[RMDB]
Chemical mapping of a 177-nucleotide RNA with DMS and 2A3. It was measured as part of the RMDB library OK2TRN. The RNA was probed in 150 mM KOAc, 10 mM MgCl2 and 150 mM bicine (pH 8.5) at 24 C.

RNA sequence: GGGAACGACUCGAGUAGAGUCGAAAAGCCAGCAUCGCCGUGGCCGGUGAGACUGCUGGCGCCAUCAUCGAUAUGGCCCACCUCAAUGCCAUCAACGACGAGCGUAGUCGACCGACUGUAGGCGAUGAGAACCAAUCUUAUUCGUAAGAUUGGUUCUAAAAGAAACAACAACAACAAC
Reactivity to DMS in 0.01 (KOAc 150mM, MgCl2 10mM, bicine 150mM(pH8.5), 24C), signal-to-noise 9, nucleotides 027 to 126: g020c010c010a160g020c010a020u000c010g030c010c010g010u000g010g020c060c020g010g020u000g000a140g020a030c050u000g020c070u010g010g010c120g020c020c040a050u000c060a210u010c180g010a120u010a020u000g000g010c000c070c050a140c160c060u010c060a100a120u010g010c020c020a090u010c180a070a120c080g010a050c080g010a070g010c140g020u000a040g020u000c010g000a060c020c020g010a040c020u000g000u010a140g020g000c020g010a030u000g000
Reactivity to 2A3 in 0.01 (KOAc 150mM, MgCl2 10mM, bicine 150mM(pH8.5), 24C), signal-to-noise 9, nucleotides 027 to 126: g080c000c000a020g030c000a010u020c000g000c030c020g230u300g040g000c030c010g000g020u040g020a240g010a030c020u030g010c040u060g060g010c010g000c010c000a040u030c010a070u120c050g160a160u040a010u230g000g000c000c010c000a080c010c020u050c050a080a130u210g030c030c030a150u090c070a140a090c040g090a020c040g010a020g060c040g040u070a010g010u010c000g000a010c000c000g010a020c010u050g030u130a100g060g000c000g000a010u020g040